RNA sequence: GGGAACGACUCGAGUAGAGUCGAAAAUCGAGGACGUUUCGACGUCCUCGAAAAAACCGUAGGUCCGGUAGGACAUGCUCAACACUUCGAAAGAGGUGCUGAGCAACAGCCUACCCGGACCUAAACGGAAAAAGAAUAGCGCUUCGGCGCUAUUCAACAUACAGUACUGGUUCGCCAGUACUGUAUGAAAAGAAACAACAACAACAAC
Reactivity to DMS in 0.01 (KOAc 150mM, MgCl2 10mM, bicine 150mM(pH8.5), 24C), signal-to-noise 1, nucleotides 027 to 156: u010c000g030a050g010g000a020c010g000u000u000u000c160g060a070c000g020u000c000c000u000c000g010a010a020a140a080a050a040c000c000g030u000a040g000g030u000c020c010g000g010u000a030g030g010a060c100a250u000g000c010u000c000a020a000c000a000c000u010u010c010g000a160a120a230g030a030g050g000u000g010c000u000g010a010g030c020a000a020c080a170g020c010c000u000a030c080c010c060g080g010a020c000c000u010a000a010a030c020g010g000a060a070a100a180a150g000a000a000u010a020g010c000g080c000u000u030c280g030g000c000g020c010u000a000u000u000c000a040a160
Reactivity to 2A3 in 0.01 (KOAc 150mM, MgCl2 10mM, bicine 150mM(pH8.5), 24C), signal-to-noise 2, nucleotides 027 to 156: u030c000g000a000g020g000a000c020g000u080u120u080c290g050a050c000g000u020c000c010u000c000g000a010a000a000a000a000a000c020c000g020u000a010g020g000u000c000c010g010g010u000a000g010g000a070c060a300u100g000c010u000c000a000a000c000a010c000u010u010c010g080a150a130a080g000a010g000g020u000g000c010u000g020a000g010c000a000a000c010a000g030c000c000u030a050c020c000c000g000g000a000c000c000u000a000a010a000c000g030g040a220a000a020a000a030g000a000a000u000a000g010c000g010c060u110u130c300g090g010c000g000c010u030a000u000u000c000a010a000
This 207-nucleotide RNA was probed chemically with DMS and 2A3. For DMS, 3,101 sequencing reads were counted. For DMS the reverse transcriptase was MarathonRT. The reactions ran in a buffer of 150 mM KOAc, 10 mM MgCl2 and 150 mM bicine (pH 8.5), at 24 C. High 2A3 reactivity points to a flexible backbone, as in loops and unpaired stretches.